[RMDB]
RNA sequence: GGGAACGACUCGAGUAGAGUCGAAAAUGGGACUUGCCUAGAAAAGAUGAAAUGCAAAAUGAAAUGUUUUCCUCUAUUGGGAAGACCACUUGGCUUGUGUUCUUUUUAAUGGUUGAGCGUAGUAUCAUUCUGUUUGGGAAGGGUGAGUGUGGGAAAAGCAGGGUCAUGAAUUCGUUCAUGACCCUGCAAAAGAAACAACAACAACAAC
Reactivity to 2A3 in 0.01 (KOAc 150mM, MgCl2 10mM, bicine 150mM(pH8.5), 24C), signal-to-noise 1, nucleotides 027 to 156: u050g020g020g040a070c010u100u130g120c030c050u090a060g070a030a150a020a000g050a000u120g030a110a150a050u180g000c080a070a090a060a100u180g050a110a140a030u040g040u030u010u040u000c000c000u130c040u070a100u080u210g010g000g000a000a010g000a030c010c000a020c050u060u120g060g000c000u040u090g050u020g030u080u050c030u000u000u040u020u010a080a080u140g040g010u050u130g030a000g000c050g030u070a020g010u050a110u170c010a010u170u000c090u080g150u030u100u130g020g000g050a050a050g010g050g000u120g110a070g000u050g010u080g020g020g050a080a090a030a000